[RMDB]
RNA sequence: GGGAACGACUCGAGUAGAGUCGAAAAAGGUUCUCAAGGGUGCGUGAGUUUUCAUUCCUGCACAGUCUCUUGUGGACAAGUAGCCACACAAUUAGGAUAAUCUCUAAUGGAUAUGCAGCCAGAGGGGUACGUAUCAUAUGUUCGCAUAUGAUACGUAAAAAGAAACAACAACAACAAC
Reactivity to 2A3 in 0.01 (KOAc 150mM, MgCl2 10mM, bicine 150mM(pH8.5), 24C), signal-to-noise 7, nucleotides 027 to 126: a010g090g000u030u000c010u010c020a010a030g090g010g000u030g010c050g020u070g030a070g040u040u050u080u190c080a050u080u010c010c010u030g000c020a020c000a040g150u010c000u000c010u080u070g020u050g010g020a020c020a060a030g060u060a040g090c020c000a040c000a010c020a040a180u110u080a050g100g000a050u060a170a090u110c050u000c020u090a070a050u070g020g000a040u070a050u250g040c040a000g020c020c010a020g030a030g030g010g020g000
Reactivity to DMS in 0.01 (KOAc 150mM, MgCl2 10mM, bicine 150mM(pH8.5), 24C), signal-to-noise 9, nucleotides 027 to 126: a090g010g010u000u000c000u000c010a090a090g010g010g020u000g010c080g010u000g000a080g010u010u010u010u010c120a140u000u000c050c020u000g010c030a030c070a120g010u010c050u000c060u000u000g010u000g000g000a050c050a090a100g010u000a090g010c020c030a070c080a070c180a070a050u000u000a050g010g000a110u010a090a090u010c100u000c030u000a040a070u000g010g010a080u000a050u000g000c090a080g000c030c030a080g010a150g000g000g000g010